Source: RMDB library 15KREP, as collected in RNAgym. This 177-nucleotide RNA was probed chemically with DMS and 2A3.

[RMDB]
RNA sequence: GGGAACGACUCGAGUAGAGUCGAAAAGAAUGCUGUGUCUCGUUCAAUGCUGGGUCUUACCACUCAGACUGUUGAUUCCUCACAGGGUUCAGAAUACCAGUACGUUAUCUUCUGUCAAACAGCAGAUCAUGUAUUGAUGCUUCGGCAUCAAUACAUGAAAAGAAACAACAACAACAAC
Reactivity to DMS in 0.01 (KOAc 150mM, MgCl2 10mM, bicine 150mM(pH8.5), 24C), signal-to-noise 2, nucleotides 027 to 126: g000a020a000u000g010c000u010g010u000g010u000c050u010c230g070u000u000c020a020a020u000g020c020u000g000g000g000u000c060u000u000a150c300c240a000c020u010c020a000g010a030c080u020g010u000u000g000a010u000u000c080c050u000c040a040c060a030g010g000g050u000u000c010a030g000a050a100u000a200c000c000a150g000u000a050c120g010u000u000a020u000c040u000u000c010u000g020u000c160a060a110a200c120a050g000c040a020g010a090u000
Reactivity to 2A3 in 0.01 (KOAc 150mM, MgCl2 10mM, bicine 150mM(pH8.5), 24C), signal-to-noise 2, nucleotides 027 to 126: g000a020a020u080g050c000u000g020u020g030u030c030u040c120g080u030u010c020a030a010u030g020c010u010g000g000g020u010c020u050u030a030c000c050a020c000u020c000a030g030a190c050u110g020u020u010g010a070u050u100c000c010u020c000a010c000a000g060g030g020u010u020c010a000g080a120a020u070a090c010c000a020g070u040a040c080g080u060u080a090u090c020u010u000c000u040g080u060c030a130a140a140c010a090g000c000a010g000a030u020